Chemical mapping of a 177-nucleotide RNA with 2A3 and DMS.
The data come from the RNA Mapping Database (RMDB), libraries RFM100 and RFMREP.
Conditions: 150 mM KOAc, 10 mM MgCl2 and 150 mM bicine (pH 8.5), 24 C.
2A3 adducts were read by reverse transcription with SuperScript II with manganese.

RNA sequence: GGGAACGACUCGAGUAGAGUCGAAAAAGUCCGUAAGGAUGUGUAUAGCGGCCGAAACCUGCCCAGUGUUGGUACCUGAAAGCUCUUUUCAAGGAGAAGAAGGGCCAAUAAACGGCGGGGGUAACUAGGUGCCAAUAUCAUUCGUGAUAUUGGCACCAAAAGAAACAACAACAACAAC
Reactivity to 2A3 in 0.01 (KOAc 150mM, MgCl2 10mM, bicine 150mM(pH8.5), 24C), signal-to-noise 2, nucleotides 027 to 126: a000g000u050c050c050g130u040a070a080g100g050a110u090g040u030g030u120a110u020a230g070c000g030g070c050c030g030a070a020a000c010c000u010g040c000c020c120a170g000u010g010u010u000g070g070u280a300c000c000u000g030a060a090a000g020c050u000c030u030u120u150u240c010a000a150g000g000a000g000a010a010g090a000a000g000g000g000c030c010a000a020u010a030a110a000c000g000g000c000g000g020g000g000g010u010a010a150c040u000a050
Reactivity to DMS in 0.01 (KOAc 150mM, MgCl2 10mM, bicine 150mM(pH8.5), 24C), signal-to-noise 2, nucleotides 027 to 126: a220g040u000c000c000g050u010a120a070g000g010a030u040g000u000g020u020a110u030a090g000c160g040g000c050c000g030a080a100a120c000c020u010g000c000c000c090a140g000u030g040u000u000g000g000u050a030c000c000u010g000a120a080a020g000c000u000c000u000u000u030u040c180a090a070g030g020a040g020a020a040g020a240a000g000g010g000c020c010a000a000u000a030a100a150c300g030g020c020g010g000g000g000g000u010a050a100c130u010a050